[RMDB]
RNA sequence: GGGAACGACUCGAGUAGAGUCGAAAACUUGAGAUUGAAAGCGAAUGAAGGCACACCUACGUUAUCCUUGUUUUCUGGAACUCCAAGCGUGUUUGCAUAAUCUGUCCUUGUAUGAGUAAAGCUGGGAACGUGUCUGUCUUUUCGAAGACAGACACGUAAAAGAAACAACAACAACAAC
Reactivity to DMS in 0.01 (KOAc 150mM, MgCl2 10mM, bicine 150mM(pH8.5), 24C), signal-to-noise 2, nucleotides 027 to 126: c020u010u000g000a080g030a080u000u020g000a110a180a080g000c010g000a120a000u040g000a180a040g040g040c090a040c100a070c040c060u020a070c080g010u020u020a060u000c050c080u040u030g000u000u000u000u000c030u000g040g050a050a110c010u000c020c020a040a130g000c010g030u010g000u020u000u000g050c080a060u010a020a120u000c080u000g040u000c000c020u000u020g010u030a070u030g000a130g000u020a020a000a090g060c060u000g000g000g040a110
Reactivity to 2A3 in 0.01 (KOAc 150mM, MgCl2 10mM, bicine 150mM(pH8.5), 24C), signal-to-noise 3, nucleotides 027 to 126: c000u020u110g130a080g060a090u120u160g050a110a160a090g030c110g040a030a090u160g030a190a020g080g000c000a000c020a010c050c010u100a040c020g070u050u050a060u150c000c000u030u110g030u010u050u030u040c040u010g070g000a040a040c010u000c000c000a040a040g010c070g060u050g000u000u190u020g000c000a020u070a190a060u040c030u020g150u030c030c000u000u020g050u060a110u130g110a110g080u250a000a270a000g080c020u000g000g000g060a100
This 177-nucleotide RNA was probed chemically with DMS and 2A3.
High 2A3 reactivity points to a flexible backbone, as in loops and unpaired stretches.
For DMS the reverse transcriptase was MarathonRT.
The DMS profile rests on 2,262 reads.